[RMDB]
Annotation: Structure probing data (DMS and 2A3) for a 177-nucleotide construct. For DMS the reverse transcriptase was MarathonRT. Conditions: 150 mM KOAc, 10 mM MgCl2 and 150 mM bicine (pH 8.5), 24 C. Source: RMDB library TTRINS, as collected in RNAgym. For DMS, 13,044 sequencing reads were counted. High DMS reactivity at an A or C suggests that its Watson-Crick edge is free.
RNA sequence: GGGAACGACUCGAGUAGAGUCGAAAAGAUAUGGAGCAACUUUACGCUAUGAAGUAUGACGAUGUAGCAUAUGUCGGAAACGACAUAUGCUACUAGUCAUAUGGAGCGUAUGGUUGCUCCUAAGUCACAUCUAGUAUAGCUUCGGCUAUACUAGAUGAAAAGAAACAACAACAACAAC
Reactivity to DMS in 0.01 (KOAc 150mM, MgCl2 10mM, bicine 150mM(pH8.5), 24C), signal-to-noise 6, nucleotides 027 to 126: g010a040u000a300u010g000g000a010g010c000a010a010c000u000u000u000a000c010g020c000u000a270u010g000a140a250g010u000a000u000g000a010c000g000a260u010g000u000a010g010c000a000u000a010u000g020u000c000g000g000a100a070a240c000g020a010c000a000u000a000u000g010c000u000a000c000u000a130g000u000c000a000u000a000u000g000g010a010g020c000g020u000a000u000g000g010u000u000g000c000u000c000c000u000a000a050g010u000c030a300
Reactivity to 2A3 in 0.01 (KOAc 150mM, MgCl2 10mM, bicine 150mM(pH8.5), 24C), signal-to-noise 3, nucleotides 027 to 126: g040a000u060a050u230g010g010a030g010c000a000a000c000u060u060u030a010c010g030c020u100a300u300g050a040a010g010u010a000u020g010a010c030g080a100u300g000u010a000g000c000a000u000a000u000g010u000c000g060g000a110a060a020c010g010a000c010a010u010a000u000g000c000u000a000c000u000a010g000u010c000a000u020a000u000g010g010a020g000c010g000u000a000u020g000g000u000u010g000c000u000c000c000u000a000a000g000u000c010a010